[RMDB]
RNA sequence: GGGAACGACUCGAGUAGAGUCGAAAAGAUAUGGACGUCCUGUGGCUAGAUGGAUCGGAAACGAUCUUUCUUGGACCCACCUGACGUCCUAAGUCAAAACUCGGAACUCGUUCGCGAGUUCCGAGAAUCCUGUAGUUUAGUUCGCUAAACUACAGGAAAAAGAAACAACAACAACAAC
Reactivity to DMS in 0.01 (KOAc 150mM, MgCl2 10mM, bicine 150mM(pH8.5), 24C), signal-to-noise 4, nucleotides 027 to 126: g000a020u000a040u010g000g000a010c000g020u000c000c030u000g010u000g020g020c030u000a020g000a010u000g000g010a000u000c000g010g000a020a010a030c000g000a000u000c000u000u000u000c000u000u010g030g000a150c260c000c000a010c010c020u000g000a010c000g010u000c010c000u000a000a040g000u000c000a110a090a110a140c010u000c000g000g010a020a010c000u000c000g020u000u000c220g010c010g010a020g010u000u000c000c010g010a000g000a050a090
Reactivity to 2A3 in 0.01 (KOAc 150mM, MgCl2 10mM, bicine 150mM(pH8.5), 24C), signal-to-noise 4, nucleotides 027 to 126: g000a000u010a000u050g000g000a000c000g010u000c020c020u000g010u010g010g030c020u000a000g000a020u000g000g000a010u010c010g000g010a000a010a000c010g010a000u010c000u010u020u000c020u060u220g300g180a300c030c000c000a000c000c000u000g000a000c000g000u000c000c000u000a000a000g010u000c000a040a030a040a230c000u000c000g000g000a000a000c000u010c000g060u140u100c270g040c010g170a010g000u010u010c000c000g000a000g000a000a050